[RMDB]
RNA sequence: GGGAACGACUCGAGUAGAGUCGAAAAACUUUGAUGGCGGUACUAUGAAUUGAUGCAAGGUGUGGAGCGACCUUAAACAGUUCUGGUGGUGCUCUGAAUGGAGUGCUCUACUGAGAUUAUAAACUAGCAUGCAUAGAGUGCUUCGGCACUCUAUGAACGGUUAGCUAUGGUUCGCCAUAGCUAACCGAAAAGAAACAACAACAACAAC
Reactivity to 2A3 in 0.01 (KOAc 150mM, MgCl2 10mM, bicine 150mM(pH8.5), 24C), signal-to-noise 3, nucleotides 027 to 156: a000c050u120u080u100g050a080u080g040g000c030g020g020u030a020c020u060a060u160g050a080a050u100u030g030a040u060g100c060a040a010g020g000u010g020u050g050g020a020g000c000g020a020c000c000u060u050a080a100a010c000a030g020u010u020c020u030g010g010u020g010g100u030g000c020u030c010u080g080a060a040u130g000g010a030g010u030g010c000u010c000u020a010c000u030g030a020g020a090u090u140a060u170a140a110a040c040u040a030g130c060a090u130g010c000a000u010a000g000a000g000u000g000c000u000u020c060g020g000c000a000c000u010c000u000a000u000g000a000a010

Record summary:
This 207-nucleotide RNA was probed chemically with 2A3. The 2A3 profile rests on 2,266 reads. Conditions: 150 mM KOAc, 10 mM MgCl2 and 150 mM bicine (pH 8.5), 24 C. It was measured as part of the RMDB library M2RFPK.